[RMDB]
RNA sequence: GGGAACGACUCGAGUAGAGUCGAAAAGUCGUGAGAUGUUGGGUUAAGUCCCGCAACGAGCGCAACCCCUAUUGUUAGUUGCCAUCAUUAAGUUGGGCACUCUAGCGAGACUGCCGGUAAUAAACCGCCAUGCUAAUGACUUCGGUCAUUAGCAUGGAAAAGAAACAACAACAACAAC
Reactivity to 2A3 in 0.01 (KOAc 150mM, MgCl2 10mM, bicine 150mM(pH8.5), 24C), signal-to-noise 3, nucleotides 027 to 126: g050u100c000g010u050g010a050g000a020u070g020u260u300g030g040g000u090u100a170a130g300u100c000c000c010g000c010a030a010c000g020a020g000c000g010c000a040a120c000c000c000c000u070a080u110u120g040u070u010a010g010u010u020g020c020c040a300u050c010a000u070u010a030a000g040u050u000g030g020g000c000a030c010u030c000u010a010g000c040g030a030g040a020c100u120g060c100c020g030g000u010a120a080u130a210a300a010c000c010g010
Reactivity to DMS in 0.01 (KOAc 150mM, MgCl2 10mM, bicine 150mM(pH8.5), 24C), signal-to-noise 3, nucleotides 027 to 126: g030u020c010g010u000g000a300g000a090u000g030u000u030g020g000g030u010u000a110a150g010u000c000c000c000g030c000a000a030c010g020a300g000c040g040c030a150a120c060c000c010c130u000a140u010u000g000u000u000a040g010u010u000g000c010c000a090u020c020a010u000u020a060a130g020u000u000g000g000g000c020a020c160u000c010u000a040g000c050g000a070g030a090c170u000g000c110c010g000g020u000a080a040u010a070a040a040c040c040g000

Source: RMDB library OK2TRN, as collected in RNAgym. Chemical mapping of a 177-nucleotide RNA with 2A3 and DMS. The reactions ran in a buffer of 150 mM KOAc, 10 mM MgCl2 and 150 mM bicine (pH 8.5), at 24 C. The 2A3 profile rests on 1,814 reads. The DMS profile rests on 1,986 reads. Reactivities are rounded to 0.1 and cut off at 0 and 3.